[RMDB]
Annotation: Structure probing data (2A3 and DMS) for a 177-nucleotide construct. Values cover nucleotides 27 to 126. It was measured as part of the RMDB library M2PK90. 2A3 adducts were read by reverse transcription with SuperScript II with manganese. For 2A3, 1,074 sequencing reads were counted.
RNA sequence: GGGAACGACUCGAGUAGAGUCGAAAAGGAAAGCGCGCGAAUUGGAAACCAGGCCGCCAUAUUACGCGCGCAAGGAAUUGGGCCUUGGUUUUUUGGAAGGAUUAGAUAAUUACCCGGCGCCCGUCAACAUAGAGUGAACUUUCGAGUUCACUCUAUGAAAAGAAACAACAACAACAAC
Reactivity to 2A3 in 0.01 (KOAc 150mM, MgCl2 10mM, bicine 150mM(pH8.5), 24C), signal-to-noise 1, nucleotides 027 to 126: g000g010a120a080a050g000c010g020c000g010c020g020a020a070u090u060g040g000a040a040a030c060c020a000g020g010c020c040g060c010c000a110u090a030u260u190a090c020g010c000g030c030g000c020a000a000g060g010a060a090u160u140g000g000g010c030c010u070u010g030g040u060u000u030u000u010u070g080g030a070a010g020g070a070u140u100a070g040a050u080a090a050u070u020a010c000c010c000g060g000c150g020c040c020c030g130u080c010a020a060
Reactivity to DMS in 0.01 (KOAc 150mM, MgCl2 10mM, bicine 150mM(pH8.5), 24C), signal-to-noise 3, nucleotides 027 to 126: g020g010a110a130a160g010c010g020c010g000c010g000a100a070u000u000g020g010a030a050a050c050c060a050g000g010c020c070g000c090c020a030u010a040u000u010a070c020g000c020g010c010g000c010a010a020g010g010a120a060u020u000g020g020g030c010c000u010u000g020g000u000u000u000u000u000u000g000g020a190a090g000g000a130u000u010a080g020a130u010a030a040u000u000a090c020c020c020g010g000c080g030c000c010c010g010u000c120a070a150